[RMDB]
RNA sequence: GGGAACGACUCGAGUAGAGUCGAAAAUCAAAUGUCUGGCUCUAUCCUACACCAAAGUUGGGCGUUUAGAGUUGAUAGAUAAAUUGAAGAAAGAUGGAAUCGAAAAGCCUGAGAAGUACGUUAAGACUCAGAAGUCAGAAUUCGUUCUGACUUCUGAAAAAGAAACAACAACAACAAC
Reactivity to 2A3 in 0.01 (KOAc 150mM, MgCl2 10mM, bicine 150mM(pH8.5), 24C), signal-to-noise 1, nucleotides 027 to 126: u040c000a000a040a000u140g030u010c010u010g070g000c030u000c010u030a010u060c020c030u140a110c080a100c030c060a170a080a070g170u270u050g040g000g000c040g020u000u010u040a000g000a040g020u000u100g070a090u030a180g040a010u020a050a180a080u130u160g030a140a090g010a020a150a000g030a020u120g050g030a020a020u070c010g050a020a000a110a050g000c020c010u070g010a040g010a050a100g010u050a010c000g010u050u100a150a000g030a030c030
Reactivity to DMS in 0.01 (KOAc 150mM, MgCl2 10mM, bicine 150mM(pH8.5), 24C), signal-to-noise 3, nucleotides 027 to 126: u010c050a030a060a110u010g020u000c000u000g000g000c010u000c030u010a050u030c020c030u010a050c130a100c070c060a070a100a140g040u000u010g020g010g010c300g000u000u010u000a050g000a050g000u000u000g010a090u010a030g010a020u010a020a080a110u010u000g000a040a070g000a080a090a070g000a050u000g000g000a070a110u000c040g000a070a060a100a080g010c000c020u010g000a070g000a050a130g000u010a040c080g010u000u010a070a110g000a160c150